[RMDB]
RNA sequence: GGGAACGACUCGAGUAGAGUCGAAAAACUCACGUGAUAACCUAAAAUGAUCCAAAGCUCUAUACGCCAAAAUAUGACAUACAUGAUCAACAUAAACGCUGUUAACACAUUCUUUGGGUGUUAAAGGGUAGUGCUAGGUAUUCGUACCUAGCACUACAAAAGAAACAACAACAACAAC
Reactivity to 2A3 in 0.01 (KOAc 150mM, MgCl2 10mM, bicine 150mM(pH8.5), 24C), signal-to-noise 4, nucleotides 027 to 126: a000c030u040c020a030c020g030u060g050a100u070a130a090c000c010u060a070a080a050a120u100g010a020u000c020c020a080a030a030g010c020u000c010u070a020u020a060c050g020c020c020a010a050a040a090u160a050u090g020a030c000a010u120a040c050a050u110g050a070u060c040a020a080c020a060u130a050a120a000c050g000c090u040g030u130u060a040a000c030a010c020a090u170u020c050u080u070u070g100g000g010u040g020u040u030a060a060a020g090g030
Reactivity to DMS in 0.01 (KOAc 150mM, MgCl2 10mM, bicine 150mM(pH8.5), 24C), signal-to-noise 3, nucleotides 027 to 126: a040c060u010c070a110c150g020u000g000a050u010a070a130c040c030u000a030a050a120a090u000g010a070u000c040c070a040a100a090g010c090u000c020u000a040u000a020c120g010c040c080a020a070a050a090u010a070u000g010a040c030a060u000a050c150a050u000g010a060u000c040a070a050c090a070u000a050a050a100c190g000c080u000g010u000u000a030a030c040a010c030a080u000u010c100u000u000u010g000g000g010u000g000u000u000a020a080a050g000g000
The record gives the reactivity of an RNA of 177 nucleotides to 2A3 and DMS. Conditions: 150 mM KOAc, 10 mM MgCl2 and 150 mM bicine (pH 8.5), 24 C. High 2A3 reactivity points to a flexible backbone, as in loops and unpaired stretches. Values cover nucleotides 27 to 126.